[RMDB]
RNA sequence: GGGAACGACUCGAGUAGAGUCGAAAAUGUGCACCCAAGCCUGAGAAGUGCCCUCGGCAGAAGGAAGGGCCCGUGGGGUCAGAGCCGGGCCACCCAUGGGGCCUGUGCUCCCAGGGGACACACCGGGUAUGCUGACGUACUUCGGUACGUCAGCAUAAAAAGAAACAACAACAACAAC
Reactivity to DMS in 0.01 (KOAc 150mM, MgCl2 10mM, bicine 150mM(pH8.5), 24C), signal-to-noise 1, nucleotides 027 to 126: u010g030u010g020c190a230c000c020c060a060a210g030c010c040u000g010a170g010a130a100g020u010g000c020c020c010u000c100g000g000c140a020g020a100a140g010g020a240a170g000g000g000c010c010c020g050u030g060g050g000g020u010c150a110g020a040g020c060c030g000g000g010c000c000a050c030c040c040a090u010g080g020g010g000c000c070u000g010u010g000c000u000c010c020c040a080g010g000g000g000a100c050a090c040a210c030c020g020g030g010